RNA sequence: GGGAACGACUCGAGUAGAGUCGAAAACUUCUGAUUCCAUCCGUGGGCUCAUUAUAAAGCAACUAGCGAGGAUUUGCUUCCUUAUACCCGCAGAUCGUAAAAUUGGAGUGGAACAGCAUACGGUCUGGUGUUCUAACCUCUUCGGAGGUUAGAACACAAAAGAAACAACAACAACAAC
Reactivity to DMS in 0.01 (KOAc 150mM, MgCl2 10mM, bicine 150mM(pH8.5), 24C), signal-to-noise 1, nucleotides 027 to 126: c010u000u040c030u000g000a110u010u000c010c000a030u020c090c040g060u000g000g000g030c050u000c030a040u040u050a160u000a030a000a070g030c030a050a100c190u000a050g070c100g020a020g050g000a100u000u010u040g000c070u000u000c120c000u000u000a190u060a150c040c050c020g000c010a000g000a000u000c000g030u000a030a070a090a200u000u060g030g000a110g000u050g000g030a030a110c020a020g010c260a140u000a000c040g030g000u000c020u070g050
Reactivity to 2A3 in 0.01 (KOAc 150mM, MgCl2 10mM, bicine 150mM(pH8.5), 24C), signal-to-noise 3, nucleotides 027 to 126: c000u040u050c010u030g060a130u070u050c000c020a020u020c020c010g090u100g020g000g020c060u000c030a050u080u200a090u130a220a090a010g040c060a010a100c050u050a010g080c050g070a040g030g010a060u000u010u100g030c020u030u020c000c000u040u090a060u070a230c000c010c030g000c020a000g010a040u020c000g020u050a000a040a100a170u130u100g060g000a080g080u080g000g020a040a080c000a010g010c000a040u030a040c000g000g000u000c020u040g080

Source: RMDB library OK1LIB, as collected in RNAgym. Structure probing data (DMS and 2A3) for a 177-nucleotide construct. For 2A3 the reverse transcriptase was SuperScript II with manganese. Conditions: 150 mM KOAc, 10 mM MgCl2 and 150 mM bicine (pH 8.5), 24 C. For DMS, 1,329 sequencing reads were counted. For DMS the reverse transcriptase was MarathonRT.